[RMDB]
RNA sequence: GGGAACGACUCGAGUAGAGUCGAAAAAUGAUUGGACAAGACAAAUGGAUUCCAUUAACCCGAAACACAGGCACAGGGAAUACAUGGUAACUAGAAUCUAUACGCAUCCCAGUUAUAGGUCGAUUGACGCAUAAAUACUCUUCGGAGUAUUUAUGCGAAAAGAAACAACAACAACAAC
Reactivity to DMS in 0.01 (KOAc 150mM, MgCl2 10mM, bicine 150mM(pH8.5), 24C), signal-to-noise 4, nucleotides 027 to 126: a080u020g000a110u010u000g010g000a130c100a130a080g000a060c130a040a130a080u000g010g010a090u000u000c010c010a050u000u000a170a150c050c000c020g010a090a130a080c140a080c120a050g000g010c040a060c110a120g010g000g000a020a050u000a060c100a030u010g010g010u010a030a090c090u000a090g000a090a050u010c020u000a030u000a050c170g010c060a060u000c010c010c010a130g000u010u000a040u010a040g010g010u000c020g000a220u010u010g010a240
Reactivity to 2A3 in 0.01 (KOAc 150mM, MgCl2 10mM, bicine 150mM(pH8.5), 24C), signal-to-noise 2, nucleotides 027 to 126: a000u140g040a050u060u090g030g040a000c040a090a060g040a050c020a010a270a020u090g030g040a120u080u050c010c000a000u000u090a030a060c000c030c010g010a050a060a000c070a010c060a130g000g060c110a010c020a080g000g000g010a080a010u030a010c040a000u070g070g000u070a050a010c020u000a070g010a090a020u010c010u010a030u010a060c010g000c050a050u010c000c000c000a010g000u030u030a120u030a050g050g040u030c010g050a050u090u210g030a030

Source: RMDB library OK2TST, as collected in RNAgym.
An RNA of 177 nucleotides, treated with DMS and 2A3 and read out base by base.
As a SHAPE reagent, 2A3 marks flexible, mostly unpaired nucleotides at the ribose 2'-OH.
Reactivities are rounded to 0.1 and cut off at 0 and 3.
DMS adducts were read by reverse transcription with MarathonRT.
For DMS, 2,774 sequencing reads were counted.
Reactivities are given for positions 27 through 126.
The reactions ran in a buffer of 150 mM KOAc, 10 mM MgCl2 and 150 mM bicine (pH 8.5), at 24 C.